[RMDB]
RNA sequence: GGGAACGACUCGAGUAGAGUCGAAAAAAGAUAUGGACGAUACUACCCACCUCCUUAGUAGAGCAACAGCUUCGCUCGGAAACGAGCGAAGACAUGCUCGAACUGGAGAGGUAUCGUCCUAAGUCAACAUUCGGAAUAACUUCGGUUAUUCCGAAUGAAAAGAAACAACAACAACAAC
Reactivity to DMS in 0.01 (KOAc 150mM, MgCl2 10mM, bicine 150mM(pH8.5), 24C), signal-to-noise 4, nucleotides 027 to 126: a110a140g020a160u000a110u010g000g010a000c020g000a010u000a000c010u000a160c030c030c030a300c090c000u000c010c000u010u010a050g020u000a160g000a010g000c010a050a070c300a160g000c010u000u000c000g020c000u000c000g000g000a120a060a180c030g020a030g010c000g010a000a010g030a020c100a100u000g000c000u000c000g000a150a180c190u000g000g010a020g010a040g020g010u000a000u000c000g000u000c000c010u000a010a080g000u000c150a090a150
Reactivity to 2A3 in 0.01 (KOAc 150mM, MgCl2 10mM, bicine 150mM(pH8.5), 24C), signal-to-noise 2, nucleotides 027 to 126: a000a010g300a110u300a130u200g000g010a000c000g000a010u000a000c000u250a300c010c010c020a030c000c000u000c000c000u000u000a020g010u020a010g020a000g010c000a010a130c030a200g040c020u010u010c000g000c010u000c010g020g000a020a070a010c020g000a010g000c010g010a000a000g000a000c000a050u040g000c000u000c000g000a010a000c000u010g000g000a010g000a010g000g000u000a000u000c000g000u000c000c000u000a010a030g150u040c070a010a050